[RMDB]
RNA sequence: GGGAACGACUCGAGUAGAGUCGAAAAGACGUAAUCCGCGCAAAUCCACAAACGCCAACGAUGAGCGUUUCGCUGUAGCCGCGUAAGGCAACAGCCGGGGCCGCCUGAGCCCUGUUACCAAAGACGGGAAACUCGAUGCCAUUCGUGGCAUCGAGAAGUGACUAUAAAUCUUCGGAUUUAUAGUCACAAAAGAAACAACAACAACAAC
Reactivity to 2A3 in 0.01 (KOAc 150mM, MgCl2 10mM, bicine 150mM(pH8.5), 24C), signal-to-noise 7, nucleotides 027 to 156: g060a010c020g030u050a070a080u070c060c040g010c010g000c060a090a070a110u080c070c040a080c060a100a050a010c040g000c020c020a130a060c140g170a200u140g050a070g030c020g010u030u080u090c060g000c000u000g010u030a040g010c010c010g070c090g120u130a060a120g010g000c000a020a010c000a020g000c000c000g000g000g000g000c010c030g040c010c020u040g010a010g000c000c000c000u010g060u070u120a030c020c020a000a010a020g110a030c020g010g020g000a060a030a020c000u000c000g000a000u000g000c000c000a020u050u070c160g080u070g000g000c000a000u000c000g000a000g000a000a010
Reactivity to DMS in 0.01 (KOAc 150mM, MgCl2 10mM, bicine 150mM(pH8.5), 24C), signal-to-noise 2, nucleotides 027 to 156: g000a050c030g000u000a120a080u000c070c010g030c060g000c040a100a070a080u000c020c030a100c040a020a280a070c000g010c010c010a060a190c060g020a180u000g000a130g000c030g040u000u010u000c060g020c030u000g030u000a060g020c000c010g020c300g010u000a100a100g000g010c020a070a010c020a050g000c050c000g040g010g030g020c010c020g070c080c040u000g000a130g030c020c000c050u040g000u000u000a130c040c070a060a040a180g000a180c110g010g000g000a070a070a140c020u000c010g030a010u000g000c000c000a150u000u000c250g000u000g010g030c000a020u000c000g000a000g000a010a070